Record summary: The record gives the reactivity of an RNA of 177 nucleotides to 2A3 and DMS. It was measured as part of the RMDB library OK2TST.
RNA sequence: GGGAACGACUCGAGUAGAGUCGAAAAGCGCCCGGGAUUCCUCGCUGUGGGCGCCGGGCGUACGCACCGAGGCAUUGAUCAGGCCAUCGGGCCGACCGCUGGCAGCCUCCUCGCCGAGGCGGGCGAGGUAUGGGAUGGUCUUCGGACCAUCCCAUACAAAAGAAACAACAACAACAAC
Reactivity to 2A3 in 0.01 (KOAc 150mM, MgCl2 10mM, bicine 150mM(pH8.5), 24C), signal-to-noise 1, nucleotides 027 to 126: g070c000g020c000c000c000g030g040g000a240u190u060c020c000u010c010g030c050u050g030u180g100g040g000c000g020c020c010g050g000g060c010g010u020a010c020g040c030a170c000c020g020a000g010g040c060a030u130u170g060a140u210c150a120g090g000c010c000a180u020c010g010g000g010c020c030g020a040c080c000g000c030u000g030g070c030a060g030c040c020u000c030c010u050c100g110c090c010g000a030g020g060c000g030g000g010c070g010a050g000
Reactivity to DMS in 0.01 (KOAc 150mM, MgCl2 10mM, bicine 150mM(pH8.5), 24C), signal-to-noise 2, nucleotides 027 to 126: g000c040g030c000c000c030g030g000g000a150u010u020c010c000u000c020g000c070u000g020u020g000g000g010c210g020c000c030g010g000g000c010g010u000a030c230g010c080a090c010c020g010a040g010g000c030a150u010u000g010a110u000c250a170g000g030c000c000a100u010c040g000g000g000c030c040g000a220c250c030g020c050u010g010g010c020a150g020c000c010u010c100c030u010c150g030c060c050g010a070g000g030c030g020g000g000c000g010a050g010
The DMS profile rests on 1,291 reads. 2A3 adducts were read by reverse transcription with SuperScript II with manganese.